The data come from the RNA Mapping Database (RMDB), library TTRINS. Structure probing data (DMS) for a 177-nucleotide construct. Reactivities are given for positions 27 through 126. For DMS the reverse transcriptase was MarathonRT.

[RMDB]
RNA sequence: GGGAACGACUCGAGUAGAGUCGAAAAGAUAUGGAUUGAGCUCCCAAGAUUUCAACAGCGUUCGUAACAUCACAUCGGAAACGAUGUGUGGAACGACAUGAAAUAAUGGGAGCUCAAUCCUAAGUCAGAAAAGAUUGAUCUUCGGAUCAAUCUUUUCAAAAGAAACAACAACAACAAC
Reactivity to DMS in 0.01 (KOAc 150mM, MgCl2 10mM, bicine 150mM(pH8.5), 24C), signal-to-noise 2, nucleotides 027 to 126: g000a060u000a300u010g000g000a020u000u000g000a000g030c000u010c000c000c000a050a070g010a030u000u000u000c000a050a110c300a180g000c090g010u000u000c020g020u000a100a190c110a040u010c000a010c000a010u040c000g000g000a130a100a230c000g020a000u000g010u000g020u000g010g010a040a010c010g010a080c100a300u010g000a030a000a000u000a040a030u010g000g010g010a000g030c020u000c010a000a000u000c000c000u000a000a070g000u000c070a210